[RMDB]
RNA sequence: GGGAACGACUCGAGUAGAGUCGAAAACGUCCCCGUCGUACAGAAUGGUAACAUAUCUCUCCAAAUAUCUGAGCUUGGGUAUACGGGGAAACCCAACCCCUUGGGAAGAUUGGGUAUAUGGCUAAAUCCGAGUUUCCUGAUUCGUCAGGAAACUCGGAAAAGAAACAACAACAACAAC
Reactivity to 2A3 in 0.01 (KOAc 150mM, MgCl2 10mM, bicine 150mM(pH8.5), 24C), signal-to-noise 1, nucleotides 027 to 126: c030g110u100c010c000c000c050g150u100c070g020u130a090c000a120g180a050a020u140g000g090u120a280a000c000a060u010a060u010c130u000c040u000c130c060a190a160a010u220a050u100c030u020g030a010g120c020u040u120g000g000g000u060a060u000a020c000g000g000g000g000a050a000a000c030c000c000a010a010c000c000c000c060u030u100g010g010g010a020a020g010a090u000u000g020g030g000u000a050u000a000u040g080g000c050u050a030a030a030u040